[RMDB]
RNA sequence: GGGAACGACUCGAGUAGAGUCGAAAAACGUGUACUGCCAGCGAGUCAAUGGCGUGAUGGUGCUUUCCGACAAGACGCCCGGGUCCGCGUCCUACCGCAUCAGCGAUAGCAACUUUGUCCAAUGUGGAUUCUAAGCUGUAUUCGUACAGCUUAGAAUAAAAGAAACAACAACAACAAC
Reactivity to 2A3 in 0.01 (KOAc 150mM, MgCl2 10mM, bicine 150mM(pH8.5), 24C), signal-to-noise 9, nucleotides 027 to 126: a000c050g020u060g030u070a070c030u050g030c020c000a030g010c040g080a040g090u120c070a070a110u100g040g000c050g020u060g030a110u060g020g050u060g030c020u040u050u040c030c010g020a040c050a070a040g090a030c030g010c000c010c000g030g000g000u020c030c020g020c050g030u030c000c010u040a060c000c010g010c010a060u050c070a040g030c020g080a040u060a030g040c030a030a100c050u110u100u100g040u020c010c010a050a060u110g040u080g090g030
Reactivity to DMS in 0.01 (KOAc 150mM, MgCl2 10mM, bicine 150mM(pH8.5), 24C), signal-to-noise 8, nucleotides 027 to 126: a060c090g020u020g020u000a050c070u010g020c020c020a080g000c060g000a090g020u020c060a090a110u020g010g010c030g000u000g000a080u010g000g020u010g000c070u000u000u010c030c030g000a110c090a070a070g000a080c070g010c020c020c040g010g000g010u010c030c060g010c040g010u000c040c020u000a070c040c020g010c030a060u010c090a070g020c070g010a070u020a060g020c080a070a060c090u020u010u010g010u010c010c020a090a080u020g010u010g010g010